[RMDB]
The record gives the reactivity of an RNA of 177 nucleotides to DMS and 2A3. The RNA was probed in 150 mM KOAc, 10 mM MgCl2 and 150 mM bicine (pH 8.5) at 24 C.
RNA sequence: GGGAACGACUCGAGUAGAGUCGAAAAGGAAUCCGCUAAGGAGUGUGUAACAACUCACCUGCCGAAUGAACUAGCCCUGAAAAUGGAUGGCGCUAAAGCGGGCUACUUAUACUUUGCCGUUAGCGCGGUUAAAGUUGGUGUUCGCACCAACUUUAACAAAAGAAACAACAACAACAAC
Reactivity to DMS in 0.01 (KOAc 150mM, MgCl2 10mM, bicine 150mM(pH8.5), 24C), signal-to-noise 5, nucleotides 027 to 126: g020g030a130a110u000c020c020g000c080u030a110a100g000g010a090g010u010g000u020g010u000a120a110c200a100a080c070u000c030a050c050c020u010g020c110c010g010a080a070u020g010a090a080c070u010a080g010c000c000c010u040g020a050a070a070a070u020g000g010a100u010g010g000c050g010c020u000a000a050a080g010c030g000g000g000c050u000a050c140u010u020a090u010a090c120u000u000u030g030c030c000g000u000u010a050g000c040g000c020g010
Reactivity to 2A3 in 0.01 (KOAc 150mM, MgCl2 10mM, bicine 150mM(pH8.5), 24C), signal-to-noise 6, nucleotides 027 to 126: g050g020a030a090u010c020c020g000c040u060a030a070g040g010a040g010u080g010u000g020u080a100a040c040a060a070c050u020c030a050c010c000u090g040c000c020g060a030a080u130g030a040a030c010u020a050g030c020c010c000u070g100a130a030a030a040u070g050g050a070u060g070g000c010g000c030u030a060a030a020g280c020g010g010g020c020u010a040c020u090u090a080u050a140c030u070u190u160g050c000c010g020u020u030a010g020c030g010c020g060